[RMDB]
RNA sequence: GGGAACGACUCGAGUAGAGUCGAAAACGACCUGCACGAAAGGCGUAACGAUCUGGGCGCUGUCUCAACGAGGGACUCGGUGAAAUUGAAUUGGCUGUAAAGAUGCGGCCUACCCGUAGCAGGACGAAAAGACCCCGUGGAGCUUUACUAUAGUCUGCAUACAUAUGCGCUUCGGCGCAUAUGUAUGAAAAGAAACAACAACAACAAC
Reactivity to DMS in 0.01 (KOAc 150mM, MgCl2 10mM, bicine 150mM(pH8.5), 24C), signal-to-noise 2, nucleotides 027 to 156: c030g000a050c010c000u010g050c030a130c060g040a090a080a060g000g020c020g000u010a090a170c030g020a080u000c020u000g000g020g000c000g000c010u010g000u000c100u010c010a110a100c120g030a100g030g000g000a130c050u000c020g020g050u000g000a060a080a160u000u000g000a110a170u000u000g030g030c040u000g000u000a130a070a090g000a160u000g020c020g020g030c000c010u010a030c020c010c020g000u000a170g020c030a020g020g010a120c040g000a110a060a090a100g000a130c010c000c030c030g040u010g040g020a220g000c020u000u020u010a030c050u000a090u000a070g000u000c030u000g020
Reactivity to 2A3 in 0.01 (KOAc 150mM, MgCl2 10mM, bicine 150mM(pH8.5), 24C), signal-to-noise 4, nucleotides 027 to 156: c010g040a050c000c000u020g000c030a010c040g120a080a030a050g020g010c010g010u050a100a090c080g080a140u050c110u190g000g060g000c050g020c020u040g030u020c000u010c060a110a160c150g060a210g030g010g030a020c010u010c050g000g060u050g030a060a110a120u110u120g010a030a120u120u120g040g000c000u030g010u050a140a090a100g130a090u140g050c000g030g030c020c000u000a030c000c000c040g000u000a030g000c010a000g010g010a030c030g040a040a020a010a100g100a070c030c030c000c000g020u060g020g030a050g010c030u110u170u100a080c080u130a070u080a140g030u060c030u070g020